[RMDB]
RNA sequence: GGGAACGACUCGAGUAGAGUCGAAAAUGGGGAUGCUCUUCCGUGACCGCAUAGGCACUUACAAGGUCAAUGUCUUCAUGGCCUUCCAGGACUGACCGUACCCGCACAGGCUUUAGCGCCCUGUAAAUGGGGAACACUGUACAACUGCCGGUGUCUAGUGGACUGGGAUAUUCGUAUCCCAGUCCACAAAAGAAACAACAACAACAAC
Reactivity to 2A3 in 0.01 (KOAc 150mM, MgCl2 10mM, bicine 150mM(pH8.5), 24C), signal-to-noise 1, nucleotides 027 to 156: u060g000g000g000g000a080u040g000c010u030c030u230u000c030c050g010u000g080a160c010c010g000c010a080u100a080g010g000c000a000c050u150u200a060c010a010a090g000g000u040c060a110a100u100g050u040c110u070u080c090a140u060g000g030c030c010u170u120c040c020a030g000g020a060c010u000g010a000c000c000g010u050a070c010c020c020g040c000a000c000a000g020g000c000u080u120u050a140g020c060g000c010c010c000u010g030u070a000a110a110u080g000g010g000g000a060a070c040a000c000u010g150u180a000c000a170a140c040u070g000c010c000g000g020u030g010u030c040u030a080